[RMDB]
RNA sequence: GGGAACGACUCGAGUAGAGUCGAAAAGAUAUGGACGUGAGGACAUGCGUUGGAUCGGAAACGAUCCCGCGCAACAGCCUCGUCCUAAGUCAAAAGGCCAAAACUAUCUUCGGAUAGUUUUGGCCAAGGUAGAAUAUCACUUCGGUGAUAUUCUACCAAAAGAAACAACAACAACAAC
Reactivity to DMS in 0.01 (KOAc 150mM, MgCl2 10mM, bicine 150mM(pH8.5), 24C), signal-to-noise 3, nucleotides 027 to 126: g000a050u000a300u000g000g010a010c010g000u010g040a020g010g010a050c180a140u000g010c000g010u010u000g000g010a000u000c000g000g000a080a060a140c010g000a010u000c000c000c060g000c010g010c010a010a050c200a150g000c060c000u000c000g000u000c000c000u000a030a110g000u010c020a070a070a110a180g000g020c000c000a020a000a000a010c000u000a010u000c000u000u010c220g020g000a020u000a000g000u000u000u000u000g000g010c000c000a000a000
Reactivity to 2A3 in 0.01 (KOAc 150mM, MgCl2 10mM, bicine 150mM(pH8.5), 24C), signal-to-noise 2, nucleotides 027 to 126: g020a020u080a080u100g010g000a020c100g220u290g140a040g020g000a030c050a160u060g000c000g000u000u000g000g000a000u000c020g050g050a080a050a050c000g000a000u000c000c000c000g020c010g000c000a000a030c040a020g040c010c000u000c000g000u000c000c000u000a180a020g070u040c020a060a020a150a200g000g000c020c050a000a000a000a000c000u010a000u000c020u070u150c300g030g000a000u000a020g010u000u000u000u020g000g010c000c000a000a000

Chemical mapping of a 177-nucleotide RNA with DMS and 2A3. Source: RMDB library TTRDEL, as collected in RNAgym. 2A3 adducts were read by reverse transcription with SuperScript II with manganese. The 2A3 profile rests on 4,120 reads. The RNA was probed in 150 mM KOAc, 10 mM MgCl2 and 150 mM bicine (pH 8.5) at 24 C.